RNA sequence: GGGAACGACUCGAGUAGAGUCGAAAAGCAGGGCGGCCAGGGCAAAGUGUCCGCCAUGCAGCUUCUUGCCGAUCUUCGGCGGCUCGGCAUUGAGAUGGGUGAGGGCGCGGCCGACCUUUGUCCACUGAUGAGUGCGAUCCUUCGGGAUCGCACUCAUAAAAGAAACAACAACAACAAC
Reactivity to 2A3 in 0.01 (KOAc 150mM, MgCl2 10mM, bicine 150mM(pH8.5), 24C), signal-to-noise 1, nucleotides 027 to 126: g040c020a000g000g000g040c030g040g000c110c000a100g020g020g070c070a000a010a010g160u190g000u050c000c000g000c030c020a040u140g000c010a020g060c020u300u180c000u010u130g050c010c010g230a020u000c000u160u180c120g000g000c000g040g080c130u130c020g170g000c050a050u080u160g000a010g000a000u050g050g040g070u040g010a050g010g000g040c000g000c030g000g020c010c000g030a100c010c000u000u020u110g010u000c000c030a020c090u000g070